RNA sequence: GGGAACGACUCGAGUAGAGUCGAAAAUGCUGCGCUUUCAGCUCUUCUUCGCGCGGCAGCACUUUAUCCAGCAGGGCGCGGAUCGCCUCUUCCGGUUGCGGCCCCUGGAAGCCAUCUACCGGUUGCCGAAGGGAACGGUAUUCGUACCGUUCCCUUCAAAAGAAACAACAACAACAAC
Reactivity to 2A3 in 0.01 (KOAc 150mM, MgCl2 10mM, bicine 150mM(pH8.5), 24C), signal-to-noise 3, nucleotides 027 to 126: u050g000c010u010g040c020g010c060u060u170u190c100a100g010c040u030c060u300u040c030u100u150c060g000c010g010c010g040g050c000a000g040c010a000c030u110u130u140a120u080c020c010a020g010c060a040g030g050g000c060g000c040g100g070a080u080c010g020c030c030u080c030u110u020c030c000g000g040u030u120g080c010g010g060c000c020c000c010u040g000g040a020a000g020c020c000a070u070c040u040a040c030c020g050g000u020u030g050c060c070
Reactivity to DMS in 0.01 (KOAc 150mM, MgCl2 10mM, bicine 150mM(pH8.5), 24C), signal-to-noise 6, nucleotides 027 to 126: u000g010c000u000g010c020g010c040u010u000u000c080a120g000c120u010c090u000u010c070u000u000c250g010c050g020c030g000g000c010a020g010c110a080c120u000u000u000a100u010c020c020a080g010c130a110g010g010g020c040g010c060g000g000a060u000c050g020c050c050u000c050u000u000c030c010g010g000u010u000g010c250g000g010c010c010c060c040u010g000g000a090a120g010c040c020a070u000c070u000a060c040c020g020g000u000u000g020c140c090